[RMDB]
An RNA of 207 nucleotides, treated with 2A3 and read out base by base. Values cover nucleotides 27 to 156. For 2A3, 363 sequencing reads were counted. The data come from the RNA Mapping Database (RMDB), library OK3TST. Values are in units of 0.01, from 0 to 300, in steps of 10.
RNA sequence: GGGAACGACUCGAGUAGAGUCGAAAACUAAUUAAUUGUUCUAGUCGCACACAUAUUUGGAGGUAUAUAGCUAAUAUCGAUUAUGUUUCCUAUAUGAAUAGUAGCAGUAUCCUCUUCAAAUCCCUCAUUGGUAUUGACAUACGCGAUAGAGAUGGAGCUGCAUGCUCUAGUUCGCUAGAGCAUGCAGAAAAGAAACAACAACAACAAC
Reactivity to 2A3 in 0.01 (KOAc 150mM, MgCl2 10mM, bicine 150mM(pH8.5), 24C), signal-to-noise 1, nucleotides 027 to 156: c020u100a090a050u090u140a050a150u000u250g050u060u000c000u030a040g170u000c020g030c000a030c000a000c000a110u040a050u060u170u110g050g000a030g000g020u000a000u000a010u030a020g000c000u000a070a040u040a110u120c040g070a040u080u000a050u080g030u080u000u060c010c080u100a110u040a020u160g090a060a000u040a090g060u100a000g020c000a040g030u000a030u080c020c060u160c000u090u070c100a070a030a060u130c010c000c040u030c040a090u130u090g070g000u050a110u040u180g030a000c010a070u060a040c090g030c010g170a030u010a010g050a000g040a010u100g030g030a060g100